Chemical mapping of a 177-nucleotide RNA with DMS and 2A3. Conditions: 150 mM KOAc, 10 mM MgCl2 and 150 mM bicine (pH 8.5), 24 C. DMS adducts were read by reverse transcription with MarathonRT. It was measured as part of the RMDB library OK2TRN. Values cover nucleotides 27 to 126.

RNA sequence: GGGAACGACUCGAGUAGAGUCGAAAAGACUCUUACAAAGGGAUAGUUGUAGGAGAUUGCUUCUCGAACUAUCCAUCUCCACGAUUCGAGAAGCAUGGUUGCCAAAUCGUGGAGUUAUUGGCAACAGCCGACGUAAAUUAUUCGUAAUUUACGUCGGAAAAGAAACAACAACAACAAC
Reactivity to DMS in 0.01 (KOAc 150mM, MgCl2 10mM, bicine 150mM(pH8.5), 24C), signal-to-noise 6, nucleotides 027 to 126: g000a130c000u000c010u000u000a010c030a020a040a130g010g010g000a060u000a030g000u000u000g010u010a010g000g000a020g010a200u000u010g010c120u000u000c000u000c010g010a060a090c150u000a040u000c040c020a090u010c010u000c000c010a010c030g010a070u000u000c100g010a100g000a070a080g010c130a040u010g020g020u000u000g000c010c010a070a050a070u000c010g010u000g000g010a030g000u000u000a050u000u000g010g010c030a030a020c020a180g010
Reactivity to 2A3 in 0.01 (KOAc 150mM, MgCl2 10mM, bicine 150mM(pH8.5), 24C), signal-to-noise 4, nucleotides 027 to 126: g020a010c000u020c000u040u040a020c020a020a030a020g140g050g050a080u090a090g040u010u020g020u020a010g000g050a030g000a100u060u170g070c020u030u020c000u000c030g040a090a040c020u040a090u040c030c000a030u030c020u020c010c000a020c030g030a040u070u100c060g070a020g020a150a000g020c030a020u070g120g000u040u020g020c000c000a010a030a030u040c030g010u020g020g000a020g020u020u020a070u030u020g000g000c000a020a010c010a020g040